[RMDB]
RNA sequence: GGGAACGACUCGAGUAGAGUCGAAAAGAUAUGGAUCAUUAGGGAGCUACGUCGGAAACGACUGGGUAGCGAAGAACUAAUUGAUCCUAAGUCAAAACGCACCAGUGGGUUCGCCCACUGGUGCGAAGGUAAAUUGUGAGUUCGCUCACAAUUUACCAAAAGAAACAACAACAACAAC
Reactivity to 2A3 in 0.01 (KOAc 150mM, MgCl2 10mM, bicine 150mM(pH8.5), 24C), signal-to-noise 1, nucleotides 027 to 126: g010a010u040a030u120g000g000a010u010c010a010u030u010a000g100g000g000a070g000c000u020a010c000g030u010c000g010g000a080a020a050c010g020a010c040u100g300g270g050u030a000g000c030g030a120a030g060a030a000c010u010a000a030u120u270g000a000u010c000c010u030a070a010g030u000c030a020a010a110a150c020g000c000a000c040c000a000g000u000g030g000g020u060u120c300g120c020c030c000a020c060u010g000g000u000g000c000g000a000a000
Reactivity to DMS in 0.01 (KOAc 150mM, MgCl2 10mM, bicine 150mM(pH8.5), 24C), signal-to-noise 1, nucleotides 027 to 126: g000a050u000a300u000g000g000a000u000c000a060u000u000a000g010g010g000a080g010c010u000a020c020g000u000c000g010g000a070a060a170c000g010a050c030u030g040g050g010u020a000g010c000g010a080a090g010a090a170c000u000a010a020u000u000g000a030u000c000c000u000a020a090g010u000c020a130a080a110a160c010g000c010a000c000c000a010g060u000g000g010g020u000u050c210g010c020c020c020a020c030u020g000g000u000g000c000g000a000a010
The data come from the RNA Mapping Database (RMDB), library TTRDEL. The record gives the reactivity of an RNA of 177 nucleotides to 2A3 and DMS. In probing experiments dimethyl sulfate is read out at A N1 and C N3, which are open when not base-paired. The reactions ran in a buffer of 150 mM KOAc, 10 mM MgCl2 and 150 mM bicine (pH 8.5), at 24 C. The 2A3 profile rests on 2,593 reads. Values cover nucleotides 27 to 126.